[RMDB]
Background:
This 207-nucleotide RNA was probed chemically with 2A3 and DMS. For DMS, 11,737 sequencing reads were counted.
RNA sequence: GGGAACGACUCGAGUAGAGUCGAAAAUCUUUCUUCGGAAAGACCUCUACCUUUGUGCACGGGAGAGGUGACCCAAUUAAGCCUGUUCCCAUUGGGAACAGGAAAACAUUGCACCUCGAAGAACGUGCACUCUGGUUUGUGCGACAUUCGUGUCGAACUACUCAUUCUGAUUCGUCAGAAUGAGUAGAAAAGAAACAACAACAACAAC
Reactivity to 2A3 in 0.01 (KOAc 150mM, MgCl2 10mM, bicine 150mM(pH8.5), 24C), signal-to-noise 9, nucleotides 027 to 156: u030c010u000u010u000c020u040u040c200g130g020a010a010a010g030a040c010c010u040c020u020a010c000c000u010u010u000g000u010g000c010a000c010g010g010g010a040g000a000g020g010u020g010a030c050c050c020a000a000u060u050a060a020g050c000c000u010g000u010u000c020c070c150a290u270u300g000g000g000a000a000c000a000g010g020a030a020a000a010c030a010u010u020g000c000a000c000c000u020c010g200a230a040g020a050a010c000g000u000g000c000a000c000u000c000u000g010g030u050u160u110g120u120g080c000g000a000c000a040u070u110c260g070u100g000u050c010g020a040a030
Reactivity to DMS in 0.01 (KOAc 150mM, MgCl2 10mM, bicine 150mM(pH8.5), 24C), signal-to-noise 4, nucleotides 027 to 156: u000c010u000u000u000c000u000u010c300g050g010a020a020a020g000a030c040c020u020c040u000a060c000c010u000u010u000g030u000g030c000a040c050g020g000g010a190g010a040g010g020u000g010a160c120c130c050a060a050u000u000a120a240g010c010c020u000g010u000u000c020c010c010a300u000u010g050g040g000a030a010c000a020g010g010a010a020a120a150c170a110u000u000g000c000a030c010c010u000c000g030a160a150g000a090a160c030g010u000g020c010a010c010u000c050u000g010g010u000u000u000g010u010g000c030g010a020c020a070u000u010c240g030u000g000u000c010g000a090a240

The reactions ran in a buffer of 150 mM KOAc, 10 mM MgCl2 and 150 mM bicine (pH 8.5), at 24 C.